[RMDB]
RNA sequence: GGGAACGACUCGAGUAGAGUCGAAAAAUUGCAAAAAUUAAGCCAUGCCUUAUCAUCCUUAUUUAAGGCCCCCACCCAGCCAUAAGUAAGAGCUGAGUCAAGCUAAAAGGGUUGGAUGUCUGUCGGCGGAUUCUCUAAAUUUCGAUUUAGAGAAUCCAAAAGAAACAACAACAACAAC
Reactivity to DMS in 0.01 (KOAc 150mM, MgCl2 10mM, bicine 150mM(pH8.5), 24C), signal-to-noise 2, nucleotides 027 to 126: a040u000u000g010c200a010a080a060a110a030u000u010a040a130g000c020c070a070u000g020c010c000u010u000a060u020c070a110u000c060c020u020u000a050u000u000u010a060a020g010g000c010c050c030c030c070a090c030c000c010a080g000c000c020a090u020a040a110g020u020a090a110g000a070g020c040u000g000a120g060u000c140a090a090g000c030u000a010a080a090a090g020g020g000u010u000g000g010a150u000g010u000c110u000g010u000c050g010g000c280
Chemical mapping of a 177-nucleotide RNA with DMS. DMS adducts were read by reverse transcription with MarathonRT. Values are in units of 0.01, from 0 to 300, in steps of 10. Reactivities are given for positions 27 through 126.